This 207-nucleotide RNA was probed chemically with 2A3. The reactions ran in a buffer of 150 mM KOAc, 10 mM MgCl2 and 150 mM bicine (pH 8.5), at 24 C.
RNA sequence: GGGAACGACUCGAGUAGAGUCGAAAACGGUUGACUUCAUGUGAUUACACGUACUCCGUUUUGUUUUUAUGUGUCAUGAUUUGCAUUGAUUUUUUCGCAACCACACCAUAAAUCUAAUAUACUCAACAGCACCUACCAAGAGUUAAAAAUGAAAUUAGAACAGUAGCACGUUCGCGUGCUACUGUUCAAAAGAAACAACAACAACAAC
Reactivity to 2A3 in 0.01 (KOAc 150mM, MgCl2 10mM, bicine 150mM(pH8.5), 24C), signal-to-noise 2, nucleotides 027 to 156: c050g000g030u030u070g020a140c070u060u020c020a020u020g100u100g050a150u090u090a060c030a030c060g030u070a070c180u180c070c020g050u160u080u170u190g000u000u090u050u000u050a010u050g030u040g030u020c070a040u090g080a090u010u010u120g010c020a010u050u100g050a090u110u100u100u140u160u170c030g020c000a020a080c000c010a010c000a000c000c000a000u000a030a010a010u000c000u040a080a000u020a150u070a190c030u030c030a010a120c000a000g010c000a000c000c000u010a010c070c070a020a020g030a020g020u080u050a110a070a000a020a000u150g020a020a020a100u080u110a110